[RMDB]
RNA sequence: GGGAACGACUCGAGUAGAGUCGAAAACCUGUUAUCUGACCAAUAACAGAAUGCACCACAGCGUAAAAUCAUCUGAUUGGGUGAGUUGGUCGCACCGCCAUUUAACGAACGAACGCCAAGCCUAAGCACUACGAGUAUGUGUUCGCACAUACUCGAAGGUACUGGACUAGUUCGCUAGUCCAGUACCAAAAGAAACAACAACAACAAC
Reactivity to DMS in 0.01 (KOAc 150mM, MgCl2 10mM, bicine 150mM(pH8.5), 24C), signal-to-noise 2, nucleotides 027 to 156: c080c000u040g010u010u010a020u000c000u020g000a050c030c030a300a020u010a030a030c010a070g000a090a120u000g030c030a110c040c050a050c110a050g000c040g060u000a060a010a090a110u000c050a080u000c040u000g000a150u000u010g010g000g010u000g010a280g010u000u010g050g000u010c040g040c050a030c000c000g000c050c010a110u010u000u020a060a080c060g010a100a040c080g000a060a070c010g000c030c030a050a100g000c050c030u020a190a060g000c060a060c030u000a190c010g230a010g000u000a000u010g010u000g100u000u000c300g020c000a070c010a000u000a040c000u000c000g000a000a060
Reactivity to 2A3 in 0.01 (KOAc 150mM, MgCl2 10mM, bicine 150mM(pH8.5), 24C), signal-to-noise 4, nucleotides 027 to 156: c000c000u010g000u000u000a010u000c000u000g020a020c010c000a020a010u000a010a000c010a000g080a130a060u150g040c030a020c040c020a060c050a050g040c020g060u070a040a060a060a120u070c040a050u020c050u070g080a160u090u180g090g000g000u010g010a030g010u010u060g020g000u020c020g030c020a020c000c000g040c040c020a100u150u150u100a080a030c030g010a040a010c030g010a040a010c040g020c030c040a030a030g010c020c040u100a080a010g050c040a060c130u180a040c060g020a010g000u000a000u000g010u010g030u040u030c110g000c050a010c000a000u000a000c000u000c000g000a010a010